[RMDB]
RNA sequence: GGGAACGACUCGAGUAGAGUCGAAAAGUUGUAAGGUUCGCCUUACAACAAAAUAAAACAGGCUAGUACCGGCCUGAAAAAGGUACGAAGAUCGUAAGAUCAAAAGACACUUGUUCGCAAGUGUCAACAGGGUUAUAUAGUUCGCUAUAUAACCCUGAAAAGAAACAACAACAACAAC
Reactivity to 2A3 in 0.01 (KOAc 150mM, MgCl2 10mM, bicine 150mM(pH8.5), 24C), signal-to-noise 3, nucleotides 027 to 126: g010u000u000g000u000a000a000g020g000u020u110c180g130c010c000u010u000a000c000a000a000c000a000a010a010a000u100a010a040a010a030c090a010g000g000c010u020a020g010u010a000c000c010g010g000c000c000u010g030a010a000a000a000a000g000g000u000a000c010g020a150a030g010a010u030c030g030u130a110a010g000a020u010c030a010a100a000a040g000a000c000a000c000u010u020g010u070u080c150g000c090a010a000g000u000g010u000c000a000a010
Reactivity to DMS in 0.01 (KOAc 150mM, MgCl2 10mM, bicine 150mM(pH8.5), 24C), signal-to-noise 4, nucleotides 027 to 126: g000u000u000g020u000a000a000g010g020u000u020c230g020c020c000u000u000a000c000a020a000c000a020a060a050a040u000a070a100a110a150c220a010g010g010c000u000a160g000u000a010c000c000g000g010c000c000u010g010a000a020a020a160a080g000g010u000a010c010g020a140a100g010a010u000c000g000u020a110a080g010a010u000c000a090a040a060a090g000a010c000a010c000u000u010g020u000u010c200g010c010a000a010g010u000g000u000c000a080a110
The data come from the RNA Mapping Database (RMDB), library M2PK50. The record gives the reactivity of an RNA of 177 nucleotides to 2A3 and DMS. For 2A3, 11,379 sequencing reads were counted.